[RMDB]
RNA sequence: GGGAACGACUCGAGUAGAGUCGAAAAUCCGUCUCCAACAAACAAACAAAUAUAUAUACAUUUGAGACGGAGCGGAGUUUCGCUCUUGUCGCCCAGGCUGGAGUGCAAUGGCGCCAUCUCGGCUCGCCAGAUUAGCGAUGUUCGCAUCGCUAAUCUGAAAAGAAACAACAACAACAAC
Reactivity to 2A3 in 0.01 (KOAc 150mM, MgCl2 10mM, bicine 150mM(pH8.5), 24C), signal-to-noise 2, nucleotides 027 to 126: u000c000c010g070u050c000u000c020c000a060a120c050a120a220a040c030a030a190a010c030a040a200a010u130a030u060a020u060a030u090a280c050a060u030u050u050g040a040g020a020c070g020g000a000g010c000g010g030a040g020u080u080u020c000g000c000u000c000u030u050g060u000c010g020c000c000c030a020g000g000c010u010g010g100a100g030u110g010c020a060a090u100g100g000c050g010c020c040a080u020c030u030c050g060g000c030u020c020g000c010
Reactivity to DMS in 0.01 (KOAc 150mM, MgCl2 10mM, bicine 150mM(pH8.5), 24C), signal-to-noise 2, nucleotides 027 to 126: u000c010c000g020u000c000u010c000c030a060a300c130a120a140a130c120a100a130a140c010a120a070a030u000a070u020a180u000a160u000a140c060a100u000u000u000g000a100g000a070c200g000g000a020g020c010g000g000a070g000u000u000u000c030g010c000u010c010u000u000g010u000c020g020c030c000c070a160g000g020c040u030g030g000a060g000u010g010c060a070a050u000g000g000c030g000c040c020a080u010c050u000c030g000g010c080u010c040g030c080